[RMDB]
The record gives the reactivity of an RNA of 177 nucleotides to DMS and 2A3.
The reactions ran in a buffer of 150 mM KOAc, 10 mM MgCl2 and 150 mM bicine (pH 8.5), at 24 C.
2A3 adducts were read by reverse transcription with SuperScript II with manganese.
It was measured as part of the RMDB library OK2TST.
For DMS, 14,812 sequencing reads were counted.
DMS (dimethyl sulfate) methylates the pairing face of unpaired adenines and cytosines.
DMS adducts were read by reverse transcription with MarathonRT.
RNA sequence: GGGAACGACUCGAGUAGAGUCGAAAACACGCGAGGCAGUGAAGGCGCUAUUGAUUCAUCCAGGGAAUGUCAGCGCCGUGAUGGAGCAGUUGCGCUUUAGGUUCGGCCGACCGGAGCAGCUUAUACAGUAUUAAAAUCGUUUCGACGAUUUUAAUACAAAAGAAACAACAACAACAAC
Reactivity to DMS in 0.01 (KOAc 150mM, MgCl2 10mM, bicine 150mM(pH8.5), 24C), signal-to-noise 8, nucleotides 027 to 126: c070a100c070g010c040g010a240g010g010c020a070g010u000g010a070a070g010g010c010g010c010u000a040u010u000g010a050u000u000c020a030u010c050c110a080g010g000g010a070a050u000g010u000c100a060g020c060g010c000c010g010u010g000a040u000g000g010a040g010c020a030g010u000u000g010c020g010c020u000u000u010a060g020g010u000u000c050g010g010c030c020g010a260c300c040g000g000a080g010c060a060g010c060u000u010a080u010a100c180a120
Reactivity to 2A3 in 0.01 (KOAc 150mM, MgCl2 10mM, bicine 150mM(pH8.5), 24C), signal-to-noise 4, nucleotides 027 to 126: c080a020c010g040c020g030a060g020g000c020a010g020u030g140a040a020g020g000c000g000c000u030a030u050u080g060a040u040u020c020a030u030c060c030a070g030g050g100a080a080u160g120u200c100a040g080c050g000c050c000g000u010g000a010u010g000g010a010g010c010a010g020u060u050g020c000g000c000u050u040u060a100g020g060u120u070c040g030g000c010c010g000a000c000c010g000g030a020g030c030a010g020c030u110u080a110u040a090c030a050